The data come from the RNA Mapping Database (RMDB), library 15KLIB. This 170-nucleotide RNA was probed chemically with DMS and 2A3. Values are in units of 0.01, from 0 to 300, in steps of 10. For 2A3, 2,454 sequencing reads were counted. Reactivities are given for positions 27 through 129. For 2A3 the reverse transcriptase was SuperScript II with manganese. The reactions ran in a buffer of 150 mM KOAc, 10 mM MgCl2 and 150 mM bicine (pH 8.5), at 24 C.
RNA sequence: GGGAACGACUCGAGUAGAGUCGAAAAAUAGGCUUAUCAAGAGAGGUGGAGGGACUGGCGCGAUGAAACCCGGCAGCCAGAAAUGGUGCCGAUUCCUGCAGCGGAAACGUUGAAAGAUGAGCCGAUGACAGCGCUGCGUUCGCGCAGCGCAAAAGAAACAACAACAACAAC
Reactivity to DMS in 0.01 (KOAc 150mM, MgCl2 10mM, bicine 150mM(pH8.5), 24C), signal-to-noise 1, nucleotides 027 to 129: a100u070a160g050g040c010u000u000a090u020c020a000a120g060a190g110a120g030g060u020g060g000a070g040g080g000a160c010u000g030g040c030g230c040g010a000u070g010a000a120a140c160c100c010g020g000c050a060g040c120c060a020g020a180a020a090u000g040g040u020g080c000c020g020a160u000u000c000c050u020g060c040a060g070c030g020g000a120a110a130c040g040u020u010g020a090a030a020g010a000u100g040a060g000c200c000g000a070u020g050a200c190a090
Reactivity to 2A3 in 0.01 (KOAc 150mM, MgCl2 10mM, bicine 150mM(pH8.5), 24C), signal-to-noise 2, nucleotides 027 to 129: a000u100a000g000g070c000u020u020a000u060c090a090a030g040a000g010a090g070g030u060g000g150a250g000g000g020a020c030u030g040g000c000g000c080g020a070u040g100a080a000a000c030c000c000g000g000c000a010g180c000c000a000g000a000a020a040u020g010g000u010g000c000c010g020a010u000u050c000c010u110g000c040a020g070c000g000g040a060a000a000c000g000u000u160g030a090a120a000g000a000u030g000a010g000c000c000g030a040u110g050a010c060a020